[RMDB]
RNA sequence: GGGAACGACUCGAGUAGAGUCGAAAAGAAACGAUGCUGGAAAAUAUAAUGGAAUCCCUGAAACGCGGAAAGGGAGAAACGCGGAAACAUUAUAGAAAUGUCGGAAAAACGAUCAGCUUCGGAGAAAGGCAUAUGAAUAGUUCGCUAUUCAUAUGCCAAAAGAAACAACAACAACAAC
Reactivity to 2A3 in 0.01 (KOAc 150mM, MgCl2 10mM, bicine 150mM(pH8.5), 24C), signal-to-noise 1, nucleotides 027 to 126: g050a010a080a000c000g000a000u030g000c000u060g020g060a010a040a020a030u010a000u000a000a010u020g010g030a030a080u010c010c000c000u020g030a080a080a000c020g000c040g040g090a130a090a090g220g030g000a020g100a020a060a000c010g000c000g010g000a090a060a010c020a000u010u010a000u000a000g150a040a150a040u120g050u050c020g030g060a110a010a000a020a160c010g010a000u030c000a000g010c000u010u010c010g020g000a040g140a050a110a000
Reactivity to DMS in 0.01 (KOAc 150mM, MgCl2 10mM, bicine 150mM(pH8.5), 24C), signal-to-noise 3, nucleotides 027 to 126: g000a190a080a130c020g020a040u000g000c000u010g000g000a110a130a110a050u010a000u000a000a010u000g000g000a120a190u010c000c010c000u000g010a110a050a100c000g010c040g010g010a040a030a110g010g010g040a160g010a040a060a080c000g030c000g030g010a070a070a070c000a000u000u010a000u010a000g020a040a020a020u010g020u010c010g010g000a060a060a040a130a110c010g000a040u000c020a000g000c020u000u000c000g000g010a080g000a070a030a050
The data come from the RNA Mapping Database (RMDB), library OK1LIB. Chemical mapping of a 177-nucleotide RNA with 2A3 and DMS. Conditions: 150 mM KOAc, 10 mM MgCl2 and 150 mM bicine (pH 8.5), 24 C.